[RMDB]
RNA sequence: GGGAACGACUCGAGUAGAGUCGAAAAAAGCUACCGGAAGAGGGAAUAGGCACCAAAUUGGGAACGGUGGUUUGGGCCGAACCAAUUGCUGCCACGGUCGCAGUCGGAGUCGAAAAAUCGGCAGGAACAAAUCCCUAUGAUUCGUCAUAGGGAUUUGAAAAGAAACAACAACAACAAC
Reactivity to DMS in 0.01 (KOAc 150mM, MgCl2 10mM, bicine 150mM(pH8.5), 24C), signal-to-noise 4, nucleotides 027 to 126: a100a080g020c060u000a080c070c020g020g010a090a090g020a100g000g000g020a120a080u020a110g020g000c020a040c080c030a030a040a040u000u010g010g010g000a100a150c030g020g010u000g010g020u000u010u000g020g010g010c000c010g000a040a170c010c010a030a020u000u000g000c210u000g000c000c010a120c090g010g010u000c080g020c050a090g020u010c070g010g000a060g020u000c020g010a040a080a060a130a070u000c050g010g010c040a070g010g000a080a160
Reactivity to 2A3 in 0.01 (KOAc 150mM, MgCl2 10mM, bicine 150mM(pH8.5), 24C), signal-to-noise 2, nucleotides 027 to 126: a000a010g050c020u030a030c000c010g070g030a080a060g080a110g120g030g050a050a150u170a210g030g000c000a010c020c020a070a060a070u050u030g040g020g050a270a140c050g040g010u090g100g140u040u150u160g150g080g020c000c020g000a020a010c010c000a020a030u030u030g020c020u010g010c000c010a040c050g000g030u050c020g000c040a000g000u020c050g010g070a080g050u020c040g020a130a050a000a050a090u040c000g030g000c030a010g070g000a050a040